[RMDB]
RNA sequence: GGGAACGACUCGAGUAGAGUCGAAAAACAAAUUAUCUAAGUCUAAGACCUUGUUUCGCGCUAACAAGGAAAAAUGGAGGAAGACCAGACCUCCAUACUUAGACAAGCGCGAACCGGGCAAAAAAAACAUGUAUUACCGUUUCGACGGUAAUACAUGAAAAGAAACAACAACAACAAC
Reactivity to DMS in 0.01 (KOAc 150mM, MgCl2 10mM, bicine 150mM(pH8.5), 24C), signal-to-noise 2, nucleotides 027 to 126: a110c080a040a040a120u010u020a030u050c040u020a080a140g000u000c080u010a090a050g010a270c030c000u000u010g030u000u000u000c010g030c010g030c010u000a090a150c100a010a040g000g000a000a010a030a090a020u000g000g000a030g000g030a080a080g000a190c120c140a190g000a130c000c000u000c000c000a010u000a020c050u000u020a020g020a070c160a120a070g020c030g000c010g000a020a030c100c300g030g000g000c050a000a000a030a020a030a110a030a080
Reactivity to 2A3 in 0.01 (KOAc 150mM, MgCl2 10mM, bicine 150mM(pH8.5), 24C), signal-to-noise 2, nucleotides 027 to 126: a000c040a030a070a060u220u130a070u160c080u200a200a020g130u030c030u110a080a000g090a110c010c000u030u110g010u040u150u050c020g030c000g000c000u030a010a020c020a070a030g000g000a150a010a000a020a040u010g000g010a010g000g030a100a010g130a150c040c020a020g120a130c000c010u000c000c000a000u010a000c000u000u000a040g070a050c000a020a010g040c000g000c000g000a000a000c010c030g000g000g000c050a070a000a060a000a000a000a000a030